[RMDB]
RNA sequence: GGGAACGACUCGAGUAGAGUCGAAAAGUCGCCGCAUCUACAUCAACGCCCAGCGCGGGCGAGGGAGGCGUCCUACGGGGGUGACCCAUUCGCCGGCAUGGUAGAGGACAGCAAGAUUGCCCCGACGGGUAAUUUUAUAUUUCGAUAUAAAAUUACCAAAAGAAACAACAACAACAAC
Reactivity to DMS in 0.01 (KOAc 150mM, MgCl2 10mM, bicine 150mM(pH8.5), 24C), signal-to-noise 5, nucleotides 027 to 126: g020u000c030g020c040c070g010c080a100u010c040u000a080c070a110u010c080a080a180c050g010c070c010c020a110g020c140g050c110g000g010g000c000g010a020g000g010g010a150g010g010c030g000u000c010c010u000a090c160g020g000g000g030g010u000g000a140c020c010c010a170u020u000c030g010c010c010g010g000c050a070u000g010g000u000a090g010a090g000g010a060c070a080g010c060a070a070g010a080u000u010g010c020c010c050c030g010a080c200g010
Reactivity to 2A3 in 0.01 (KOAc 150mM, MgCl2 10mM, bicine 150mM(pH8.5), 24C), signal-to-noise 2, nucleotides 027 to 126: g030u030c010g010c020c040g000c030a060u040c030u110a040c020a110u130c050a080a070c020g000c020c020c020a090g120c230g020c150g090g000g010c020g010a030g020g000g000a160g020g030c020g040u020c010c000u030a090c070g190g000g030g020g020u030g070a160c000c000c020a030u020u050c010g000c020c000g110g070c060a040u080g050g000u030a050g010a020g040g000a020c020a040g050c000a040a100g030a150u080u150g020c000c000c000c020g030a020c050g110